Source information
Conditions: 150 mM KOAc, 10 mM MgCl2 and 150 mM bicine (pH 8.5), 24 C. This 207-nucleotide RNA was probed chemically with 2A3. The 2A3 profile rests on 1,464 reads. Reactivities are given for positions 27 through 156. Source: RMDB library OK3TST, as collected in RNAgym.
RNA sequence: GGGAACGACUCGAGUAGAGUCGAAAAGAUGGGCCUUCUGGCAAUGUACCUGGCCGCCCAGGAGGUCCUGAGGAAGAGAUAGACGGCCAGGGUCCGAUCAUACGAUAUAAACCUGCUCCACGUAUGAUCGGUUAUGACAAUUAAGAAGAGCAGGUUAGGGCAUAGUAAUGUUCGCAUUACUAUGCCCAAAAGAAACAACAACAACAAC
Reactivity to 2A3 in 0.01 (KOAc 150mM, MgCl2 10mM, bicine 150mM(pH8.5), 24C), signal-to-noise 2, nucleotides 027 to 156: g070a010u080g000g000g000c010c010u000u020c000u000g010g050c060a000a080u120g040u140a150c010c000u000g000g000c000c000g020c000c000c000a000g000g000a000g000g020u000c000c000u030g030a030g000g150a080a020g050a050g020a100u100a060g100a050c040g010g000c000c000a000g000g000g000u010c000c000g010a000u000c000a000u020a000c030g020a050u030a010u140a160a160a050c020c010u000g000c000u020c040c040a030c000g000u000a000u000g000a000u000c000g000g000u030u000a010u000g020a020c050a000a080u160u100a120a080g080a030a010g000a020g010c000a000g000g000u000u070a000